[RMDB]
This 177-nucleotide RNA was probed chemically with DMS and 2A3.
RNA sequence: GGGAACGACUCGAGUAGAGUCGAAAACACACAAACACGCCACAUUGUGCAUGUUAUGCAAGAAUGCGUGUUUUACACCAAAACACCUUACAUAUUGCAUUGCAACACUGUUUUUGCGCAAUCAUACCAUCCUCCCCUGGUUCGCCAGGGGAGGAUGAAAAGAAACAACAACAACAAC
Reactivity to DMS in 0.01 (KOAc 150mM, MgCl2 10mM, bicine 150mM(pH8.5), 24C), signal-to-noise 2, nucleotides 027 to 126: c080a040c130a090c070a150a080a030c110a070c060g060c050c200a120c190a050u000u000g020u000g000c030a060u000g010u000u000a010u000g030c000a000a020g010a070a040u020g010c190g000u000g010u000u000u000u000a050c270a100c220c120a050a000a030a050c020a040c000c080u020u000a110c090a050u010a130u000u000g010c010a000u010u000g000c040a030a120c020a000c120u000g000u010u000u000u000u010g020c020g000c100a100a070u010c080a070u010a070c130
Reactivity to 2A3 in 0.01 (KOAc 150mM, MgCl2 10mM, bicine 150mM(pH8.5), 24C), signal-to-noise 3, nucleotides 027 to 126: c070a010c010a010c080a040a080a020c080a030c110g050c040c010a090c040a080u070u120g000u040g040c030a050u050g010u150u140a060u030g000c010a000a000g060a090a070u070g040c050g050u000g010u000u000u000u020a030c040a040c000c030a000a000a010a030c020a020c000c020u080u110a070c030a120u180a090u090u040g020c010a000u000u050g000c010a050a060c050a050c120u070g110u120u060u030u140u050g000c060g000c010a020a060u060c030a030u050a130c060
Values cover nucleotides 27 to 126. Source: RMDB library OK2TRN, as collected in RNAgym. The DMS profile rests on 1,142 reads.